Chemical mapping of a 177-nucleotide RNA with DMS and 2A3. Reactivities are given for positions 27 through 126.
RNA sequence: GGGAACGACUCGAGUAGAGUCGAAAAAACUACUUCUUCGGAAGUAGUUAUUGCGUGGGUCUAAUAAGCCCAACGUGCCAGGUUCGACCCUUGCUGGGCGCAUCACCGACCGAUUCGUCGGUCGGAAUAUAGAAAUACGUUUCGACGUAUUUCUAUAAAAAGAAACAACAACAACAAC
Reactivity to DMS in 0.01 (KOAc 150mM, MgCl2 10mM, bicine 150mM(pH8.5), 24C), signal-to-noise 6, nucleotides 027 to 126: a020a010c000u000a010c000u000u000c000u000u020c220g020g000a010a010g010u000a000g010u000u000a010u000u000g010c040g010u000g000g000g010u000c010u000a120a080u010a150a200g000c000c000c000a030a030c050g020u010g010c040c030a120g010g010u000u000c050g010a160c020c000c010u000u000g020c120u000g000g010g010c030g010c150a060u010c110a160c020c000g000a010c000c000g000a020u000u010c170g010u000c000g010g010u000c000g000g000a030a040
Reactivity to 2A3 in 0.01 (KOAc 150mM, MgCl2 10mM, bicine 150mM(pH8.5), 24C), signal-to-noise 3, nucleotides 027 to 126: a000a000c010u000a010c010u000u000c010u020u040c290g090g010a020a000g000u000a000g000u000u000a130u080u150g010c000g000u030g010g020g000u020c020u000a060a050u110a200a060g010c010c010c000a000a000c020g000u040g040c030c030a040g050g000u060u090c090g080a300c000c000c020u040u100g080c090u090g020g040g000c020g000c030a060u090c040a020c020c010g000a000c000c000g000a010u010u060c210g030u010c000g060g010u000c000g000g000a000a010
Overview:
The DMS profile rests on 10,118 reads.